[RMDB]
RNA sequence: GGGAACGACUCGAGUAGAGUCGAAAAGCCAGUCCCAUUGUGUCAGGCAGUGCAGAGGAGCACCAGAGUGCAGCCAACGAGCGACUUUGGGCAGCAGAGGCGAGGGCAAAGGCGGCAGAGGUAGACAGCUUUAAAUGGGUUUCGACCCAUUUAAAGCAAAAGAAACAACAACAACAAC
Reactivity to 2A3 in 0.01 (KOAc 150mM, MgCl2 10mM, bicine 150mM(pH8.5), 24C), signal-to-noise 2, nucleotides 027 to 126: g060c030c000a020g060u040c070c000c030a070u090u260g050u000g010u050c050a030g020g000c020a010g020u040g050c020a020g030a020g100g070a050g020c010a050c020c020a000g000a000g050u150g150c100a040g020c060c040a160a140c130g060a050g080c020g020a000c000u060u060u050g010g050g000c030a060g000c030a020g050a030g100g000c060g030a090g000g000g000c050a060a060a000g020g030c000g000g010c020a020g010a010g100g020u040a030g030a080c050a050
Reactivity to DMS in 0.01 (KOAc 150mM, MgCl2 10mM, bicine 150mM(pH8.5), 24C), signal-to-noise 3, nucleotides 027 to 126: g010c030c050a110g010u000c030c000c010a160u010u000g020u010g010u000c040a090g030g050c050a040g020u000g020c060a070g030a150g000g010a100g010c040a130c020c050a040g000a050g000u010g000c040a110g000c030c020a110a120c230g000a120g010c030g010a050c050u000u000u000g000g000g030c110a090g010c060a070g000a090g020g010c060g000a090g000g010g000c060a050a060a080g000g000c070g020g010c040a040g000a060g000g020u000a080g010a090c130a080